RNA sequence: GGGAACGACUCGAGUAGAGUCGAAAAGCUGGAUGCUGUUGUGCAUGAACAGCUCUCCAGUGGAUUCGAUGGGCCCCAGCAAUCUUGUGAUUUAUGCAGGGAGGGUGCUUCUCCUCAGCAGCUGCCACGCAAAAUUGUCGUUCGCGACAAUUUUGCGAAAAGAAACAACAACAACAAC
Reactivity to DMS in 0.01 (KOAc 150mM, MgCl2 10mM, bicine 150mM(pH8.5), 24C), signal-to-noise 1, nucleotides 027 to 126: g000c050u000g000g000a000u030g030c020u000g000u010u000g010u050g120c150a220u070g000a050a110c000a030g010c020u000c100u020c000c010a000g000u010g000g000a300u000u000c040g000a010u000g020g070g040c030c020c010c110a040g000c080a080a040u020c020u000u000g100u000g040a200u000u070u040a020u010g040c080a120g030g000g010a090g000g050g000u020g000c130u000u000c040u000c030c070u000c020a120g040c090a080g000c020u000g010c050c010a130
Reactivity to 2A3 in 0.01 (KOAc 150mM, MgCl2 10mM, bicine 150mM(pH8.5), 24C), signal-to-noise 3, nucleotides 027 to 126: g000c010u000g000g000a000u010g000c000u020g040u040u000g110u080g080c140a120u150g070a040a050c020a000g020c010u000c040u030c010c000a010g010u000g060g060a080u070u100c060g050a050u080g040g030g040c010c000c000c010a010g040c020a030a000u040c030u050u080g080u080g060a130u080u100u090a110u210g020c010a030g010g140g010a010g040g030g060u080g030c010u080u020c030u000c000c020u040c010a040g010c000a000g030c020u070g000c010c020a030
An RNA of 177 nucleotides, treated with DMS and 2A3 and read out base by base. For DMS, 1,282 sequencing reads were counted. The RNA was probed in 150 mM KOAc, 10 mM MgCl2 and 150 mM bicine (pH 8.5) at 24 C.